[RMDB]
RNA sequence: GGGAACGACUCGAGUAGAGUCGAAAACAUGCGCGGCAGGUGCUCCGGAUGUUUGGAGCCGCGUCGCAAGCGGUGUCUGCACGUGCGAUGGCGGCCUCCUGUGCGGCCAGACUCUGGCAACCUGGCCUCUAGUCAGGCUGUUCGCGGCUUGGCUAGAAAAAGAAACAACAACAACAAC
Reactivity to DMS in 0.01 (KOAc 150mM, MgCl2 10mM, bicine 150mM(pH8.5), 24C), signal-to-noise 9, nucleotides 027 to 126: c040a050u010g000c040g020c200g000g000c020a140g000g010u030g000c050u000c200c010g010g000a050u010g000u000u020u010g000g010a100g010c000c010g010c010g010u000c020g010c020a040a050g010c030g000g010u020g000u020c060u020g010c030a080c090g010u000g000c010g000a020u000g010g020c010g000g000c040c030u000c000c000u000g010u010g010c070g000g000c000c000a020g000a090c050u020c080u010g000g000c170a090a090c120c000u000g000g000c010c020
Reactivity to 2A3 in 0.01 (KOAc 150mM, MgCl2 10mM, bicine 150mM(pH8.5), 24C), signal-to-noise 9, nucleotides 027 to 126: c020a030u080g020c040g000c020g030g000c020a040g040g070u100g050c020u020c020c010g070g060a090u130g120u110u140u170g040g010a020g000c010c000g000c010g010u010c000g010c010a020a030g230c050g020g030u060g050u060c080u110g040c030a020c050g040u030g000c010g010a010u030g230g010c000g000g010c000c010u010c000c010u040g030u070g050c030g010g000c010c000a010g000a040c020u020c030u100g030g010c020a020a020c000c000u010g020g000c000c000

The record gives the reactivity of an RNA of 177 nucleotides to DMS and 2A3. DMS adducts were read by reverse transcription with MarathonRT. The RNA was probed in 150 mM KOAc, 10 mM MgCl2 and 150 mM bicine (pH 8.5) at 24 C. For DMS, 85,020 sequencing reads were counted. 2A3 adducts were read by reverse transcription with SuperScript II with manganese.